[RMDB]
RNA sequence: GGGAACGACUCGAGUAGAGUCGAAAACGUGCAUCGCCCCGCGAGGCACAAUCUCCAGAAACGUCUUUGCCACGGAGCGCUUGGCGACCAAAUUCGGCGGUUUUCGAGCACCGCUCAGGUAAGGAUUGAAGAACAUGUUUGCAGCGGCCGUCAAUCAUCUUAGUGACUGGUUCGCCAGUCACUAAGAAAAAGAAACAACAACAACAAC
Reactivity to 2A3 in 0.01 (KOAc 150mM, MgCl2 10mM, bicine 150mM(pH8.5), 24C), signal-to-noise 1, nucleotides 027 to 156: c050g000u000g010c000a030u010c000g050c020c100c100c210g000c010g030a030g000g000c010a000c020a010a060u050c060u080c050c010a030g060a060a190a000c030g050u050c010u030u000u090g000c020c000a040c080g080g000a120g010c100g000c040u030u000g000g000c030g010a060c020c000a080a120a190u280u270c070g060g000c010g000g000u030u040u010u100c020g050a010g000c020a000c020c010g000c030u010c020a000g000g000u010a000a020g010g000a050u000u210g060a140a040g050a010a080c030a070u230g030u180u170u110g140c040a040g000c000g020g020c020c000g040u000c020a020a060u130c040a040